Chemical mapping of a 207-nucleotide RNA with DMS and 2A3. The reactions ran in a buffer of 150 mM KOAc, 10 mM MgCl2 and 150 mM bicine (pH 8.5), at 24 C. Source: RMDB library M2RFPK, as collected in RNAgym. The DMS profile rests on 1,984 reads.
RNA sequence: GGGAACGACUCGAGUAGAGUCGAAAAUGGUAGUCCGCCACUCUAAGGGGACGCCUUUAGAAGAAGAGGCUAGGUGGUAUACCGGUGUGGGAUACUUGGUAAUAUGUAACGCUAAUUGCAUAAGAUUAAAACUUUGCAUACUUCGGUAUGCAAAGAACCCUGUUAUAGACUUCGGUCUAUAACAGGGAAAAGAAACAACAACAACAAC
Reactivity to DMS in 0.01 (KOAc 150mM, MgCl2 10mM, bicine 150mM(pH8.5), 24C), signal-to-noise 1, nucleotides 027 to 156: u020g030g040u000a060g000u010c010c000g020c020c020a140c090u000c080u000a030a040g020g010g010g000a100c110g040c010c010u000u000u000a070g000a080a090g000a140a090g000a130g010g020c070u000a040g050g030u010g030g030u000a180u000a040c040c020g000g030u000g020u000g030g010g020a130u000a040c050u010u000g050g020u000a070a150u000a060u000g020u000a060a080c090g020c060u000a060a130u000u010g030c010a080u000a060a100g000a160u000u000a080a040a050a050c000u000u000u000g020c010a020u000a000c010u000u010c300g060g020u000a010u020g000c010a010a000a030g000a040a100
Reactivity to 2A3 in 0.01 (KOAc 150mM, MgCl2 10mM, bicine 150mM(pH8.5), 24C), signal-to-noise 4, nucleotides 027 to 156: u120g020g000u040a130g010u010c020c030g060c080c050a080c050u150c060u120a140a120g000g010g000g010a010c010g050c000c000u080u100u090a120g030a170a010g030a050a010g030a040g050g010c040u040a030g030g000u030g010g060u090a070u020a120c020c020g000g000u030g000u020g010g040g000a010u030a110c020u030u080g010g020u050a060a040u060a080u170g050u040a030a030c040g000c130u060a080a090u080u110g000c010a040u070a130a080g010a070u140u190a010a110a000a030c000u010u000u000g000c000a000u000a000c000u000u000c010g030g000u010a000u010g000c000a000a000a000g000a000a000